[RMDB]
RNA sequence: GGGAACGACUCGAGUAGAGUCGAAAAAGCCGUGAUACGUCACGGCAAUGUCUGCCAUGAUGAAAUGCAAUUUCAGUCCGUGUUUCAGCUGAUUACCCUGAUUGCAUGCAUACUCUGAGCAGACUAAUCAAAAGUAAGGCUUCGGCCUUACUUUUGAAAAAGAAACAACAACAACAAC
Reactivity to DMS in 0.01 (KOAc 150mM, MgCl2 10mM, bicine 150mM(pH8.5), 24C), signal-to-noise 3, nucleotides 027 to 126: a110g010c000c000g010u000g010a000u000a070c270g020u010c000a030c020g010g000c010a000a010u020g020u000c010u000g000c000c000a030u030g000a060u010g010a100a120a000u010g000c000a000a010u020u010u010c010a010g000u000c050c110g000u010g000u010u000u010c040a290g010c070u000g010a030u030u040a080c030c020c030u010g020a020u000u000g000c010a000u000g000c060a060u030a180c240u010c070u000g000a150g000c010a000g020a020c010u010a030a060
Reactivity to 2A3 in 0.01 (KOAc 150mM, MgCl2 10mM, bicine 150mM(pH8.5), 24C), signal-to-noise 3, nucleotides 027 to 126: a000g000c010c030g000u030g000a010u040a130c290g060u000c010a000c010g000g030c000a000a010u030g000u000c000u000g000c000c000a050u210g000a030u060g010a020a290a000u000g030c010a020a010u010u050u110c030a040g000u060c060c080g070u050g120u120u130u130c090a090g050c020u110g040a140u040u110a110c030c030c010u040g000a050u000u000g020c000a000u020g000c010a050u080a190c000u020c020u040g010a040g020c000a000g010a000c000u010a020a020
This 177-nucleotide RNA was probed chemically with DMS and 2A3. DMS adducts were read by reverse transcription with MarathonRT.